[RMDB]
RNA sequence: GGGAACGACUCGAGUAGAGUCGAAAACUCGCACCACGAUGUUGGGGGUCACGUCCACAAUGGCGAGGCUGCGGUAAAUCGCUGGGUAGAGCGUUAUGAUUCCUGCGGUAGCAGCCACGGAUAAUGCGAAUCCAAAGUGCGUUGCUAAGGAGCAAUAACGUGAAAAUAUGUUCGCAUAUUUUCACGUAAAAGAAACAACAACAACAAC
Reactivity to 2A3 in 0.01 (KOAc 150mM, MgCl2 10mM, bicine 150mM(pH8.5), 24C), signal-to-noise 7, nucleotides 027 to 156: c010u020c020g010c040a060c010c000a020c050g080a080u070g050u200u150g050g010g000g000g040u040c050a010c090g040u030c040c020a120c080a170a120u150g020g010c010g020a050g020g000c020u100g050c010g060g060u130a060a140a080u050c030g020c090u070g010g020g100u110a060g020a030g040c040g030u100u140a150u200g140a120u090u060c000c010u030g000c020g040g030u040a020g010c000a000g000c020c000a000c020g000g020a020u040a130a070u290g100c130g060a040a010u000c010c000a080a070a020g040u020g010c080g020u020u010g000c010u040a050a040g080g030a070g020c010a030a070u130a130
Reactivity to DMS in 0.01 (KOAc 150mM, MgCl2 10mM, bicine 150mM(pH8.5), 24C), signal-to-noise 3, nucleotides 027 to 156: c050u010c010g030c050a120c020c020a120c080g000a090u000g020u000u010g030g020g030g020g000u000c080a120c110g030u010c000c020a040c080a080a080u010g050g030c000g010a130g010g000c010u000g010c010g030g020u010a040a090a090u010c030g030c030u000g010g000g030u000a110g020a130g000c050g010u010u020a090u000g010a200u000u000c010c020u000g020c010g040g040u000a120g020c050a040g000c000c020a050c090g010g010a090u000a040a080u010g030c040g010a130a100u000c000c020a070a080a130g040u000g040c120g020u000u000g000c000u010a150a150g000g010a120g010c060a080a060u020a180